[RMDB]
RNA sequence: GGGAACGACUCGAGUAGAGUCGAAAAAAUGGCAGUUCGAUGAAAUACUCACUCAUUAUCUUCGAGCUCCAUUGUUGCAAUAAUCUCAUACGGGUCGACAUUAUUGCGAAUCUGGUCAAGUAACAUGAACGCGUCUUGUGGUGAGAGAAAAUGGCGAAUAGAUAAACAAUUUCGAUUGUUUAUCUAUAAAAGAAACAACAACAACAAC
Reactivity to DMS in 0.01 (KOAc 150mM, MgCl2 10mM, bicine 150mM(pH8.5), 24C), signal-to-noise 5, nucleotides 027 to 156: a040a030u000g010g030c080a030g040u010u000c010g010a050u010g000a100a090a110u000a110c060u000c070a140c120u000c110a130u000u000a110u000c030u000u000c010g000a030g010c000u000c010c010a100u000u000g010u000u000g000c010a110a090u000a080a130u000c030u000c020a110u000a130c070g000g000g020u000c040g010a120c050a040u000u000a080u010u000g020c010g020a090a150u000c050u000g010g020u000c100a070a100g020u000a070a050c060a060u000g010a050a060c080g000c040g020u000c020u010u010g020u000g020g030u010g010a080g020a090g000a070a050a070a090u000g000g020c060g010a120
Reactivity to 2A3 in 0.01 (KOAc 150mM, MgCl2 10mM, bicine 150mM(pH8.5), 24C), signal-to-noise 8, nucleotides 027 to 156: a000a000u030g000g020c070a000g000u000u000c010g000a010u030g040a040a060a040u130a060c080u090c120a050c040u130c060a090u040u150a150u150c020u020u010c000g000a010g000c000u000c000c000a000u010u040g070u040u110g000c010a010a020u050a040a020u020c010u020c060a050u090a170c060g050g010g060u070c040g020a040c010a030u020u110a030u030u090g010c000g020a040a060u040c070u110g060g010u070c050a060a060g040u050a110a030c040a090u110g040a040a020c050g010c020g040u030c020u040u050g020u030g040g030u030g020a030g000a010g000a050a050a020a050u060g040g000c020g010a030
This 207-nucleotide RNA was probed chemically with DMS and 2A3. Reactivities are given for positions 27 through 156.